[RMDB]
This 177-nucleotide RNA was probed chemically with DMS and 2A3. The reactions ran in a buffer of 150 mM KOAc, 10 mM MgCl2 and 150 mM bicine (pH 8.5), at 24 C. Reactivities are rounded to 0.1 and cut off at 0 and 3. The 2A3 profile rests on 726 reads.
RNA sequence: GGGAACGACUCGAGUAGAGUCGAAAAUAGUGCGCUAUGCCGAUCGGGUGUCCGCACUAAGUUCGGCAUCAAUAUGGUGACCUCCCGGGAGCGGGGGACCACCAGGUUGCCUAAGGAGGGGUGAACCACGACCGUUUGUCUUCGGACAAACGGUCGUAAAAGAAACAACAACAACAAC
Reactivity to DMS in 0.01 (KOAc 150mM, MgCl2 10mM, bicine 150mM(pH8.5), 24C), signal-to-noise 1, nucleotides 027 to 126: u000a030g000u000g000c140g000c050u000a000u000g000c030c060g020a150u200c300g000g000g010u000g020u000c300c010g120c000a020c080u000a040a120g000u000u000c040g000g020c000a010u120c050a050a080u000a100u040g000g000u000g040a040c090c000u070c000c010c000g010g000g070a200g000c020g000g000g020g000g020a030c010c000a050c010c000a030g000g090u010u000g000c050c070u000a150a150g000g000a150g020g000g000g000u000g030a140a200c010c040
Reactivity to 2A3 in 0.01 (KOAc 150mM, MgCl2 10mM, bicine 150mM(pH8.5), 24C), signal-to-noise 2, nucleotides 027 to 126: u100a000g020u020g010c010g000c030u100a000u060g010c000c030g130a240u120c090g150g020g000u000g010u000c000c030g030c030a010c050u050a010a010g010u010u070c110g000g000c000a060u000c000a070a150u140a110u140g000g000u010g040a160c000c010u050c000c020c000g000g110g020a150g040c070g000g000g000g000g070a090c170c000a000c020c000a020g040g040u030u000g010c000c010u010a040a030g050g010a010g000g000g030g020u020g040a010a000c000c000